[RMDB]
An RNA of 170 nucleotides, treated with 2A3 and DMS and read out base by base. For 2A3, 43,791 sequencing reads were counted. It was measured as part of the RMDB library 15KLIB. For DMS the reverse transcriptase was MarathonRT.

RNA sequence: GGGAACGACUCGAGUAGAGUCGAAAACGGGAAUCCCUGGGUUCCUCUGAUGUCCAGUCCCUCUCCCGUCCGAGUGAAGGGAGACUCCGGAACUCCAGUCAUUUGAGGGACGAAUCCGCCCCCGGGCAUAGGUUCUUCUUCGGAAGAACCAAAAGAAACAACAACAACAAC
Reactivity to 2A3 in 0.01 (KOAc 150mM, MgCl2 10mM, bicine 150mM(pH8.5), 24C), signal-to-noise 9, nucleotides 027 to 129: c020g000g010g060a000a060u060c030c000c010u050g050g030g000u010u010c010c000u030c060u070g040a030u060g030u010c020c020a010g010u000c010c000c000u000c010u010c010c010c000g040u040c020c030g180a080g060u270g040a040a030g020g010g000a020g020a020c050u050c070c040g020g020a050a040c000u000c020c020a030g030u040c020a040u030u050u120g020a020g000g000g000a000c010g010a040a070u060c020c020g020c020c000c000c000c010g020g030g000c060a120u130a130
Reactivity to DMS in 0.01 (KOAc 150mM, MgCl2 10mM, bicine 150mM(pH8.5), 24C), signal-to-noise 5, nucleotides 027 to 129: c120g010g030g040a050a050u000c050c030c030u040g070g040g000u000u020c000c000u050c060u000g000a000u000g040u000c020c060a090g000u050c010c020c030u030c020u000c000c000c000g000u000c060c040g110a120g030u130g030a050a050g060g030g020a040g040a040c100u050c120c140g020g050a120a110c050u050c040c080a000g030u000c000a050u000u000u000g020a000g040g030g010a010c050g020a100a030u070c010c010g040c000c010c010c000c010g030g050g000c120a080u040a120